[RMDB]
RNA sequence: GGGAACGACUCGAGUAGAGUCGAAAAUGCUCGGCAUCACGCACCCCGACGCAGGUUCGAUCAGUCUGUGCGGCGAACCCGUGCCGUCCCGCGCGCGGCACGCGCGGCAGCGCGUCGGCGUCGUGCAGACCUGAGGAGGGUUCGCCCUCCUCAGGUCAAAAGAAACAACAACAACAAC
Reactivity to 2A3 in 0.01 (KOAc 150mM, MgCl2 10mM, bicine 150mM(pH8.5), 24C), signal-to-noise 2, nucleotides 027 to 126: u070g000c020u030c020g070g010c060a100u060c020a050c130g010c000a050c010c020c000c000g010a010c020g020c030a030g070g000u030u070c010g050a200u100c050a020g160u040c050u150g150u200g280c040g010g000c000g000a050a030c000c030c010g040u020g000c020c010g050u070c000c030c000g020c000g020c000g030c010g100g000c030a010c030g020c030g000c010g090g020c000a040g020c010g000c000g020u030c020g030g020c010g010u040c010g000u010g000c020a020
Reactivity to DMS in 0.01 (KOAc 150mM, MgCl2 10mM, bicine 150mM(pH8.5), 24C), signal-to-noise 2, nucleotides 027 to 126: u000g000c030u000c000g000g020c160a120u000c050a100c100g000c100a070c060c130c020c000g020a040c070g020c030a070g000g000u000u010c060g000a130u010c090a160g010u010c060u000g000u000g000c030g020g010c000g010a050a050c030c020c030g020u000g000c000c010g010u000c060c050c040g020c070g030c040g020c020g000g000c050a110c000g010c020g000c040g020g030c170a060g010c030g000c020g020u000c070g000g030c140g010u000c020g010u040g000c140a070